[RMDB]
RNA sequence: GGGAACGACUCGAGUAGAGUCGAAAAACCUUUGUGGCUCGGGAGUGCGUUGAUCACCCAGUGAGGCUACCCAUUGGGUAGCUCUGGGUGGGAGCACAUCGAUCGAGCCACUCUGGUAAAACGUGGAGCGUAAGUAUUCGUACUUACGCUCCACGAACUAACGCAUUAGAUUCGUCUAAUGCGUUAGAAAAGAAACAACAACAACAAC
Reactivity to DMS in 0.01 (KOAc 150mM, MgCl2 10mM, bicine 150mM(pH8.5), 24C), signal-to-noise 2, nucleotides 027 to 156: a050c000c010u000u000u000g010u000g010g000c000u000c020g020g030g010a170g030u000g000c010g030u000u000g020a250u010c000a030c000c000c000a030g010u010g010a190g050g000c000u000a030c000c000c000a300u000u000g050g030g020u010a010g010c010u010c010u000g010g000g060u010g030g010g000a090g010c010a030c020a060u000c060g010a210u000c000g020a060g010c010c000a000c000u000c030u000g060g040u000a060a070a070a130c030g040u010g000g020a050g000c000g000u010a000a030g010u010a050u000u000c250g030u000a010c000u000u000a010c040g000c000u000c000c000a010c000g000a010a070
Reactivity to 2A3 in 0.01 (KOAc 150mM, MgCl2 10mM, bicine 150mM(pH8.5), 24C), signal-to-noise 7, nucleotides 027 to 156: a000c010c000u010u010u010g000u000g010g010c010u000c010g010g040g020a030g010u000g010c010g140u230u040g010a020u010c000a000c000c000c000a010g010u130g300a130g090g020c000u000a000c000c000c050a300u140u300g020g010g000u010a000g000c050u030c000u030g000g000g000u000g000g000g000a000g000c010a020c020a170u090c040g090a100u060c010g000a000g020c000c000a000c000u010c000u000g000g000u050a080a090a000a020c010g000u000g000g010a000g000c000g010u000a000a010g000u010a030u080u240c270g000u030a000c010u000u000a000c000g000c000u000c000c000a000c000g000a000a000
This 207-nucleotide RNA was probed chemically with DMS and 2A3.
2A3 adducts were read by reverse transcription with SuperScript II with manganese.